[RMDB]
RNA sequence: GGGAACGACUCGAGUAGAGUCGAAAAGAUAUGGAGAUAACAGCGAUAAGCCUGUGUCGGAAACGACACAAGGCUUUUGACGCUGGAAGCUCCUAAGUCAAAAGAGCAGGUGUUCGCACCUGCUCAAGGAACAUAACUUGUUCGCAAGUUAUGUUCCAAAAGAAACAACAACAACAAC
Reactivity to DMS in 0.01 (KOAc 150mM, MgCl2 10mM, bicine 150mM(pH8.5), 24C), signal-to-noise 3, nucleotides 027 to 126: g010a020u010a180u010g000g010a040g000a010u000a180a290c020a000g010c010g010a140u000a000a010g020c000c010u000g010u010g010u000c000g000g000a050a040a070c010g000a000c000a000c010a020a030g020g000c010u000u000u000u010g000a150c060g020c000u000g000g000a090a140g000c000u000c000c000u000a020a100g000u010c020a070a060a180a160g000a010g010c000a020g020g010u000g000u000u020c220g020c000a020c000c000u010g020c000u000c000a000a040
Reactivity to 2A3 in 0.01 (KOAc 150mM, MgCl2 10mM, bicine 150mM(pH8.5), 24C), signal-to-noise 1, nucleotides 027 to 126: g030a000u060a030u110g040g000a020g000a010u080a230a030c000a000g020c030g090a100u010a250a000g010c000c010u000g020u000g000u020c000g000g000a020a030a000c010g000a000c000a000c010a040a040g020g010c000u010u010u000u010g030a020c010g000c000u000g000g030a000a060g000c010u010c000c000u000a050a020g040u010c020a030a010a100a170g000a000g020c000a020g000g000u010g060u100u220c300g030c120a020c010c000u000g000c000u000c010a010a000